RNA sequence: GGGAACGACUCGAGUAGAGUCGAAAACGAGGUUCCGACAGGAGAUCUUUACGACGCAUCUCACGUUCAACUCGAAUCCAGAGUCAAUUGAUGCGGCGACGAAGAAUGUUCAGAACGUGAAGCAGUACCAUUAGGGAGCGUUCGCGCUCCCUAAUGGAAAAGAAACAACAACAACAAC
Reactivity to DMS in 0.01 (KOAc 150mM, MgCl2 10mM, bicine 150mM(pH8.5), 24C), signal-to-noise 2, nucleotides 027 to 126: c030g010a100g050g000u000u000c010c000g000a210c190a050g000g000a050g010a040u000c010u010u000u010a150c030g000a070c010g020c030a070u000c010u050c100a120c150g000u010u010c060a170a050c000u000c010g020a080a150u010c190c160a120g000a120g000u000c060a100a040u010u040g020a020u010g010c080g010g000c040g000a120c080g000a090a020g010a140a090u020g010u040u010c100a080g040a030a000c030g060u010g020a060a150g010c070a080g020u010a200
Reactivity to 2A3 in 0.01 (KOAc 150mM, MgCl2 10mM, bicine 150mM(pH8.5), 24C), signal-to-noise 1, nucleotides 027 to 126: c030g060a040g050g150u000u030c020c010g010a030c070a050g060g040a120g040a030u000c000u000u000u070a030c020g000a000c040g080c000a010u050c010u030c050a040c000g040u040u020c010a010a010c030u060c010g120a140a170u110c080c050a020g000a010g020u010c030a050a160u120u150g000a050u100g010c010g010g000c010g070a180c050g000a090a050g100a070a010u140g080u110u170c060a020g030a020a000c030g050u060g010a030a010g070c070a020g070u070a140